[RMDB]
RNA sequence: GGGAACGACUCGAGUAGAGUCGAAAAGUGGGCGUGCGGCAAUCAGCGACGGCGUUUAUCGCCUUCUGCAUCCGCAGCACUUCGGCGUGGAAGUCGGUGCGGGGGCGUGCCAGUGCGCCGUCGGUCACGACGCAUCCCUAUUCGUAGGGAUGCGUCGAAAAGAAACAACAACAACAAC
Reactivity to 2A3 in 0.01 (KOAc 150mM, MgCl2 10mM, bicine 150mM(pH8.5), 24C), signal-to-noise 3, nucleotides 027 to 126: g070u090g010g020g030c010g020u080g000c000g030g010c020a030a110u090c030a100g090c000g010a010c010g010g010c030g010u010u100u090a160u070c010g000c000c000u130u120c030u120g030c010a030u100c020c010g030c060a030g030c020a010c000u090u080c090g240g010c110g040u080g110g040a100a020g030u130c020g050g010u020g000c010g020g000g000g000g000c000g000u010g030c030c040a110g090u090g030c010g000c000c000g010u010c010g010g040u110c040a020
Reactivity to DMS in 0.01 (KOAc 150mM, MgCl2 10mM, bicine 150mM(pH8.5), 24C), signal-to-noise 4, nucleotides 027 to 126: g030u000g000g010g030c030g030u010g020c040g010g000c080a090a090u020c160a170g010c020g010a010c040g010g020c000g010u000u000u000a090u010c010g010c000c000u000u010c010u000g050c020a030u010c010c070g020c190a230g010c140a020c010u000u010c100g010g020c190g020u000g000g010a050a050g010u010c060g040g020u010g010c020g010g000g000g010g010c010g020u000g000c140c170a110g020u010g010c020g000c000c010g000u000c010g000g000u010c140a150
Conditions: 150 mM KOAc, 10 mM MgCl2 and 150 mM bicine (pH 8.5), 24 C.
The record gives the reactivity of an RNA of 177 nucleotides to 2A3 and DMS.
As a SHAPE reagent, 2A3 marks flexible, mostly unpaired nucleotides at the ribose 2'-OH.
For 2A3, 4,832 sequencing reads were counted.
The DMS profile rests on 5,453 reads.
2A3 adducts were read by reverse transcription with SuperScript II with manganese.
Values cover nucleotides 27 to 126.
For DMS the reverse transcriptase was MarathonRT.